[RMDB]
RNA sequence: GGGAACGACUCGAGUAGAGUCGAAAAUCAUCUAUGUUCGCAUAGAUGAACACAGCGUUGUAGUUUUAGUGGACUUUAGGCUAAAGAAUUUCACUAGAAAAAUAAUCGGGUGUUUCGACACCCGAAAACAAGAAAGACGAUUCGUCGUCUUUCUUGUAAAAGAAACAACAACAACAAC
Reactivity to 2A3 in 0.01 (KOAc 150mM, MgCl2 10mM, bicine 150mM(pH8.5), 24C), signal-to-noise 1, nucleotides 027 to 126: u010c000a000u000c010u020a000u010g000u000u000c270g010c170a040u000a000g000a020u000g000a030a000c130a010c040a050g130c070g020u030u190g040u160a230g000u130u030u050u000a000g010u000g020g010a020c030u050u000u060a120g110g090c080u170a120a050a030g000a090a180u010u010u110c030a010c020u010a040g090a060a070a010a070a090u300a020a050u040c000g010g100g000u010g000u070u040u090c090g010a010c000a000c020c000c000g000a050a000a000
Reactivity to DMS in 0.01 (KOAc 150mM, MgCl2 10mM, bicine 150mM(pH8.5), 24C), signal-to-noise 2, nucleotides 027 to 126: u000c010a020u000c000u000a010u000g020u000u000c250g030c010a020u000a000g010a020u000g000a020a090c110a070c110a080g010c150g000u010u000g010u010a050g000u000u000u000u000a010g010u000g000g000a010c040u000u000u000a080g020g010c200u010a080a060a110g010a130a060u000u010u000c010a010c000u000a020g000a010a040a100a080a110u010a080a090u010c000g000g010g010u000g000u000u000u000c130g000a050c000a010c000c000c000g000a010a010a060